RNA sequence: GGGAACGACUCGAGUAGAGUCGAAAACGGUCUCGUAUAUUGACUCGUCGUCCUCGUAGGGGGCGUGCCGUUCGCGGGCCGAGGCGGCGUGGGUGGCUUUGCGGCGGGCGUCGUCGUCGUCGUCGUCGCCCAGGUUGGGCUUCGGCCCAACCUGGGCAAAAGAAACAACAACAACAAC
Reactivity to 2A3 in 0.01 (KOAc 150mM, MgCl2 10mM, bicine 150mM(pH8.5), 24C), signal-to-noise 2, nucleotides 027 to 126: c090g030g010u050c140u100c150g180u080a040u010a030u120u220g030a080c010u010c110g050u010c010g000u030c010c000u070c140g100u200a170g040g020g020g000g000c060g030u050g050c000c000g010u080u110c060g010c080g020g000g000c000c000g050a020g000g030c040g030g010c080g000u090g070g000g000u100g040g000c000u060u020u300g000c000g010g000c000g000g010g000c000g000u100c010g060u010c000g010u010c010g050u040c020g050u020c000g010u050c020
Chemical mapping of a 177-nucleotide RNA with 2A3. It was measured as part of the RMDB library OK1LIB. Values are in units of 0.01, from 0 to 300, in steps of 10. 2A3 adducts were read by reverse transcription with SuperScript II with manganese. Conditions: 150 mM KOAc, 10 mM MgCl2 and 150 mM bicine (pH 8.5), 24 C.